Structure probing data (DMS) for a 177-nucleotide construct.
RNA sequence: GGGAACGACUCGAGUAGAGUCGAAAAUUAUCAGAGUAUACAAAUACGAUGAUAAACAGUUGAAGCGAAUCUUGAUUUGCUUUUCCUAAACCUGAUUCUUUUAGAAUCAGGUUUUUGUUUAUCUAAAACGAGAUACAUUCUUCGGAAUGUAUCUCGUAAAAGAAACAACAACAACAAC
Reactivity to DMS in 0.01 (KOAc 150mM, MgCl2 10mM, bicine 150mM(pH8.5), 24C), signal-to-noise 2, nucleotides 027 to 126: u020u020a030u010c000a000g010a300g030u000a000u010a090c300a090a150a060u020a010c020g000a200u000g000a020u010a000a040a140c170a060g010u040u000g000a050a000g000c000g000a010a010u000c100u010u000g000a050u000u000u000g000c010u000u000u010u000c000c000u020a000a000a000c000c000u000g020a000u000u000c010u020u030u020u030a030g000a020a000u000c000a000g000g000u000u000u000u000u000g010u020u020u020a100u000c030u020a020a070a180